RNA sequence: GGGAACGACUCGAGUAGAGUCGAAAAGGAGUGCUACCGAAAGGUAGCACUCCAACAAAUCGGUGUAAUUGCAGCCCGGAUUACACCGUGCGGCACAGCGGAAACGCUGAUGUCGUAUAUAGGGCUACUAUUUAGUGGGAUUCGUCCCACUAAAUAGAAAAGAAACAACAACAACAAC
Reactivity to DMS in 0.01 (KOAc 150mM, MgCl2 10mM, bicine 150mM(pH8.5), 24C), signal-to-noise 4, nucleotides 027 to 126: g000g010a020g030u000g010c010u000a010c000c000g020a100a130a180g010g020u000a000g010c000a000c010u000c000c000a030a040c120a050a100a070u010c010g020g020u000g000u000a000a010u000u000g020c070a060g000c000c000c000g000g000a020u000u000a010c000a000c000c000g030u000g020c000g000g010c010a020c000a000g000c000g010g000a150a090a200c000g020c000u000g010a060u000g020u000c000g020u000a040u010a100u010a040g040g020g010c010u000a220
Reactivity to 2A3 in 0.01 (KOAc 150mM, MgCl2 10mM, bicine 150mM(pH8.5), 24C), signal-to-noise 2, nucleotides 027 to 126: g000g000a000g000u000g010c010u010a010c000c020g080a070a090a080g020g000u000a000g000c000a000c010u000c000c000a010a000c000a000a010a010u080c010g000g000u010g000u000a010a000u010u050g050c060a010g010c000c000c010g020g000a000u010u010a000c000a000c010c000g000u040g000c000g010g010c010a000c000a000g000c010g010g030a080a050a020c010g000c010u010g010a060u000g000u000c000g010u000a000u010a000u010a010g010g010g010c010u020a050
This 177-nucleotide RNA was probed chemically with DMS and 2A3. Reactivities are given for positions 27 through 126. High 2A3 reactivity points to a flexible backbone, as in loops and unpaired stretches. It was measured as part of the RMDB library OK2TRN. For DMS the reverse transcriptase was MarathonRT. Conditions: 150 mM KOAc, 10 mM MgCl2 and 150 mM bicine (pH 8.5), 24 C.